The record gives the reactivity of an RNA of 177 nucleotides to DMS and 2A3. For DMS, 3,244 sequencing reads were counted. Values cover nucleotides 27 to 126. It was measured as part of the RMDB library OK2TRN. For 2A3, 2,498 sequencing reads were counted. The RNA was probed in 150 mM KOAc, 10 mM MgCl2 and 150 mM bicine (pH 8.5) at 24 C. For DMS the reverse transcriptase was MarathonRT.
RNA sequence: GGGAACGACUCGAGUAGAGUCGAAAAAUCACGCUUUUUGGAAAGUGGAAAUAUUUGAUGAACAUAAUCAUAUACUUCCAAAAUAUAAUCAUAAUAGCUAUGACCAUAUGCCAUGUUAGCAUAUGCGAACUGCGAUAGAGUUCGCUCUAUCGCAGUUAAAAGAAACAACAACAACAAC
Reactivity to DMS in 0.01 (KOAc 150mM, MgCl2 10mM, bicine 150mM(pH8.5), 24C), signal-to-noise 4, nucleotides 027 to 126: a110u010c060a080c230g000c050u000u000u000u000u000g010g000a050a130a140g030u000g000g010a030a030a040u000a000u000u000u000g000a010u000g000a150a180c130a160u010a140a030u000c000a010u010a040u000a010c020u000u010c000c010a010a030a040a100u010a110u000a110a090u000c000a020u000a020a090u010a050g010c070u010a090u000g000a090c180c000a020u000a000u010g000c010c080a100u010g000u010u000a110g010c000a010u000a010u000g010c140g000
Reactivity to 2A3 in 0.01 (KOAc 150mM, MgCl2 10mM, bicine 150mM(pH8.5), 24C), signal-to-noise 3, nucleotides 027 to 126: a000u050c010a020c060g050c020u070u110u000u060u040g070g020a110a080a080g060u050g040g090a010a080a040u100a070u020u090u040g020a020u040g020a160a040c040a240u300a240a020u080c000a010u010a000u000a050c010u000u000c000c000a050a010a110a030u250a040u070a070a040u090c010a000u060a190a040u090a180g010c030u050a070u100g020a030c000c020a000u000a000u010g010c020c030a070u190g060u230u200a010g000c000a000u010a010u010g030c000g030